[RMDB]
RNA sequence: GGGAACGACUCGAGUAGAGUCGAAAAUCCUAAGUCUUGUCGGCGCUAACCUUGGAUUUACUACGCAAGCACUCGGAAACGAGUGUGAUGACCGUAGUUGUCAGGUUAGCCGAGACAAGAUAUGGAAAACGUUCAGUGGGUUCGCCCACUGAACGAACAGUAUUCGUACCUUCGGGUACGAAUACUGAAAAGAAACAACAACAACAAC
Reactivity to 2A3 in 0.01 (KOAc 150mM, MgCl2 10mM, bicine 150mM(pH8.5), 24C), signal-to-noise 3, nucleotides 027 to 156: u000c020c000u040a160a030g010u010c030u000u000g010u000c010g010g070c120g000c110u000a000a000c000c000u050u180g130g000a030u200u210u180a010c000u000a000c000g020c050a050a180g010c000a000c000u000c010g070g030a080a120a070c010g000a000g000u010g000u020g040a130u140g040a010c080c020g000u010a010g000u000u030g000u020c000a000g000g000u000u000a000g000c000c000g000a000g000a000c000a000a000g000a000u040a080u040g020g010a000a140a040a090c010g000u000u000c000a000g000u000g020g000g020u060u070c220g150c040c020c000a010c000u000g020a000a000c000g000a010a000
Reactivity to DMS in 0.01 (KOAc 150mM, MgCl2 10mM, bicine 150mM(pH8.5), 24C), signal-to-noise 1, nucleotides 027 to 156: u000c010c000u000a100a250g010u000c050u000u010g010u000c010g070g160c170g010c010u000a030a000c010c010u000u020g030g030a010u010u020u010a020c020u000a000c000g000c000a220a300g000c050a050c000u000c020g000g000a230a120a280c030g100a030g030u000g010u000g000a050u010g030a060c300c040g000u000a050g000u000u010g000u010c000a000g000g000u000u000a040g000c000c050g000a210g030a080c030a040a010g000a010u000a110u000g000g000a000a040a110a140c030g000u000u000c000a000g040u000g030g000g040u020u020c300g060c020c020c020a010c020u030g000a000a000c000g020a050a160